[RMDB]
This 177-nucleotide RNA was probed chemically with 2A3 and DMS. The reactions ran in a buffer of 150 mM KOAc, 10 mM MgCl2 and 150 mM bicine (pH 8.5), at 24 C. For 2A3 the reverse transcriptase was SuperScript II with manganese. High DMS reactivity at an A or C suggests that its Watson-Crick edge is free. For 2A3, 4,755 sequencing reads were counted.
RNA sequence: GGGAACGACUCGAGUAGAGUCGAAAAAGCGCUACGGCGAGCGCGUGAUCGUCGACGGCCUGUCCUUCGCGCUGCGGCGCGGCGAGUGCUAUGGCCUGCUGGGCCCCAACGGCGCGGGCAAGACCAAGCCCUAUUUUAUCUUCGGAUAAAAUAGGGCAAAAGAAACAACAACAACAAC
Reactivity to 2A3 in 0.01 (KOAc 150mM, MgCl2 10mM, bicine 150mM(pH8.5), 24C), signal-to-noise 3, nucleotides 027 to 126: a000g040c020g000c030u080a030c030g010g010c020g020a000g010c050g000c110g110u140g030a070u010c020g030u010c000g050a080c050g010g020c010c020u030g010u060c010c020u070u140c050g000c010g000c010u040g030c070g050g000c080g000c000g080g000c070g110a040g020u180g000c030u090a090u300g200g000c000c000u000g010c000u050g030g110g020c010c000c010c010a040a040c040g060g000c020g000c020g000g000g020c040a060a000g020a020c020c010a020a040
Reactivity to DMS in 0.01 (KOAc 150mM, MgCl2 10mM, bicine 150mM(pH8.5), 24C), signal-to-noise 3, nucleotides 027 to 126: a090g000c010g030c010u010a120c060g010g000c050g010a020g000c020g010c050g010u010g010a050u000c030g010u000c010g020a220c200g000g010c020c020u000g000u020c010c040u000u020c060g000c010g010c010u010g010c180g010g010c020g010c010g030g010c040g010a050g010u000g030c030u000a100u010g020g010c010c010u010g000c040u000g000g000g010c020c000c020c030a140a110c060g010g000c020g020c170g010g000g010c020a040a050g000a060c040c030a110a190